[RMDB]
RNA sequence: GGGAACGACUCGAGUAGAGUCGAAAAAUAAAAACAUCAUCGUACGGUGCGGUGAGUACCGGUGUGUAUAUUAGUUCUGACGAAUGGAACAGAGCUAAAAGCUCUAAACAGCCAAACUUACCUGGUCUACUGAUCACCUGUUCGCAGGUGAUCAGUAAAAAGAAACAACAACAACAAC
Reactivity to DMS in 0.01 (KOAc 150mM, MgCl2 10mM, bicine 150mM(pH8.5), 24C), signal-to-noise 2, nucleotides 027 to 126: a090u080a010a090a050a070a010c150a060u000c070a050u050c040g060u000a170c150g000g010u020g030c080g020g050u020g000a080g010u020a000c030c040g000g070u000g010u010g000u020a090u030a180u060u000a000g000u000u000c020u000g030a070c050g010a160a070u030g000g030a060a050c050a000g000a060g000c010u000a030a100a080a080g000c000u000c010u010a020a050a080c280a150g020c000c040a040a050a070c040u000u010a030c020c000u030g000g000u020c180
Reactivity to 2A3 in 0.01 (KOAc 150mM, MgCl2 10mM, bicine 150mM(pH8.5), 24C), signal-to-noise 3, nucleotides 027 to 126: a000u180a000a010a000a000a010c030a120u050c000a000u030c030g060u060a140c020g010g100u140g060c080g060g010u050g010a020g030u020a040c000c030g000g000u080g000u000g000u010a000u030a060u240u180a050g030u010u010c000u000g090a050c080g050a250a070u050g020g000a000a050c000a010g000a000g000c000u050a100a070a030a000g000c000u020c000u010a000a040a000c020a000g010c000c000a050a030a010c000u030u040a010c000c020u030g000g100u060c030